The record gives the reactivity of an RNA of 177 nucleotides to DMS and 2A3. The DMS profile rests on 2,230 reads. 2A3 adducts were read by reverse transcription with SuperScript II with manganese. For 2A3, 1,690 sequencing reads were counted. The RNA was probed in 150 mM KOAc, 10 mM MgCl2 and 150 mM bicine (pH 8.5) at 24 C. DMS adducts were read by reverse transcription with MarathonRT.
RNA sequence: GGGAACGACUCGAGUAGAGUCGAAAAUGCCUGUUGCUGGCGGGCAACGCACUGCUGCGUUUUCGCGGCAUCUCCGUGUAGCUGCCGGGCCCACGCCUACUAUCGCCCACCGUAUGGUAGUAGAACGACUGUCUUGGAGUUUCGACUCCAAGACAGUAAAAGAAACAACAACAACAAC
Reactivity to DMS in 0.01 (KOAc 150mM, MgCl2 10mM, bicine 150mM(pH8.5), 24C), signal-to-noise 2, nucleotides 027 to 126: u010g030c020c020u010g020u000u000g000c050u010g000g000c020g020g000g040c060a140a050c110g020c080a050c160u010g020c070u010g010c000g030u000u000u010u010c040g040c020g000g000c030a030u000c110u000c110c150g010u000g040u010a070g000c050u000g000c020c020g040g000g010c030c040c030a120c110g010c090c000u000a030c030u000a030u000c050g000c080c040c050a070c120c100g010u000a080u010g000g040u000a020g010u000a020g000a110a060c100g010
Reactivity to 2A3 in 0.01 (KOAc 150mM, MgCl2 10mM, bicine 150mM(pH8.5), 24C), signal-to-noise 1, nucleotides 027 to 126: u060g020c000c000u050g100u140u070g040c020u020g050g060c000g020g020g030c060a050a050c070g030c040a040c040u100g000c020u030g010c040g050u030u030u070u200c060g000c000g000g050c000a040u030c030u010c050c000g100u050g170u300a020g020c030u050g030c030c040g000g010g000c000c030c000a030c040g060c000c010u010a030c020u010a000u030c000g040c040c040c030a120c060c080g050u110a080u260g020g000u010a010g030u010a000g020a100a030c060g070